This 177-nucleotide RNA was probed chemically with DMS and 2A3.
RNA sequence: GGGAACGACUCGAGUAGAGUCGAAAAUCUUUGGCUUUCGAGCCAAAGAGUGGGUGCAAUGUCCUUUAAGCACCAAACACGGAAAUACCGUGAAAGGACAAAAAAAUCACAGUUUCGACUGUGAUAAACACCAAUUGUCAUUCGUGACAAUUGGUGUAAAAGAAACAACAACAACAAC
Reactivity to DMS in 0.01 (KOAc 150mM, MgCl2 10mM, bicine 150mM(pH8.5), 24C), signal-to-noise 2, nucleotides 027 to 126: u000c000u020u000u000g000g000c000u000u000u000c230g040a060g030c000c000a000a000a000g000a020g010u000g010g000g020u000g010c000a260a120u000g030u000c000c000u000u000u010a100a240g000c020a030c000c010a040a140a220c000a020c010g050g000a090a200a090u000a080c000c010g000u000g000a070a040a050g020g000a000c010a000a000a010a080a100a040a050u000c000a000c000a000g000u000u000u000c180g010a030c000u000g000u000g010a000u000a020a110
Reactivity to 2A3 in 0.01 (KOAc 150mM, MgCl2 10mM, bicine 150mM(pH8.5), 24C), signal-to-noise 3, nucleotides 027 to 126: u020c010u000u000u000g010g000c000u060u030u100c220g130a000g000c010c000a000a000a000g010a000g020u100g120g020g000u030g010c050a190a300u130g030u010c010c000u030u040u060a050a020g000c000a010c010c020a010a050a000c000a000c000g000g040a080a250a160u150a250c000c010g020u000g030a050a020a000g000g010a000c000a000a130a020a000a030a000a010u000c010a010c000a000g000u040u040u130c210g090a020c000u010g000u010g000a010u030a010a070
The reactions ran in a buffer of 150 mM KOAc, 10 mM MgCl2 and 150 mM bicine (pH 8.5), at 24 C. DMS adducts were read by reverse transcription with MarathonRT. For 2A3 the reverse transcriptase was SuperScript II with manganese. It was measured as part of the RMDB library M2PK50. For DMS, 1,448 sequencing reads were counted.